[RMDB]
Structure probing data (DMS) for a 177-nucleotide construct. It was measured as part of the RMDB library OK2TST. The RNA was probed in 150 mM KOAc, 10 mM MgCl2 and 150 mM bicine (pH 8.5) at 24 C.

RNA sequence: GGGAACGACUCGAGUAGAGUCGAAAAACGCUCGCCGAUUGUGGUGAUACGCGCACUAUGCAGUGAUAACCCUAAAUCAGCGAAAAUGUCACCGACGCGUGCCAGUAAGCCUGGCUGGUCUAGAGCACCUCGCGUCUAAAUUCGUUUAGACGCGAGGAAAAGAAACAACAACAACAAC
Reactivity to DMS in 0.01 (KOAc 150mM, MgCl2 10mM, bicine 150mM(pH8.5), 24C), signal-to-noise 1, nucleotides 027 to 126: a120c060g010c170u000c000g000c000c010g020a100u010u010g010u000g030g010u000g000a080u010a010c110g000c090g030c030a230c140u000a050u000g060c100a120g020u000g000a080u000a060a260c140c010c010u000a050a020a010u000c010a050g020c030g000a080a060a070a100u030g000u000c060a050c060c040g000a060c080g020c020g000u000g020c010c020a010g000u000a160a150g010c190c030u000g000g020c000u000g000g020u010c100u000a060g020a120g010c110a170